[RMDB]
RNA sequence: GGGAACGACUCGAGUAGAGUCGAAAAUACAGCCAAGUGACCUCUUGAAUAGAUGCUUGAUUCGUCAUUUGCUACAGCACGGGAAAUAAUCUCAGCGCUGGUGUUAGGAGCAUUUAAAAGAGCCCUAGCCCAGGAUAAAUUUCGAUUUAUCCUGGGCAAAAGAAACAACAACAACAAC
Reactivity to DMS in 0.01 (KOAc 150mM, MgCl2 10mM, bicine 150mM(pH8.5), 24C), signal-to-noise 2, nucleotides 027 to 126: u010a070c160a120g010c040c030a070a110g020u000g000a120c080c170u010c020u000u000g000a130a090u000a190g000a080u010g010c010u000u000g000a090u020u030c150g000u000c050a020u020u000u010g010c030u000a130c020a010g040c030a040c100g030g020g000a040a110a160u010a070a090u000c010u020c020a090g030c060g000c000u000g000g010u000g000u000u000a040g000g000a060g000c010a020u000u000u040a040a110a060a030g030a110g000c040c020c010u030a160
Reactivity to 2A3 in 0.01 (KOAc 150mM, MgCl2 10mM, bicine 150mM(pH8.5), 24C), signal-to-noise 5, nucleotides 027 to 126: u100a000c020a010g090c050c020a110a040g080u050g030a110c020c010u030c030u060u050g090a090a060u120a140g110a120u090g030c020u030u090g050a070u260u090c000g070u050c060a070u070u060u190g000c000u040a050c010a000g010c010a020c020g020g000g050a070a060a020u230a130a220u090c010u000c020a050g000c000g020c030u010g010g030u040g010u020u030a060g020g050a090g000c020a000u010u000u120a070a120a020a040g050a000g000c000c000c000u020a050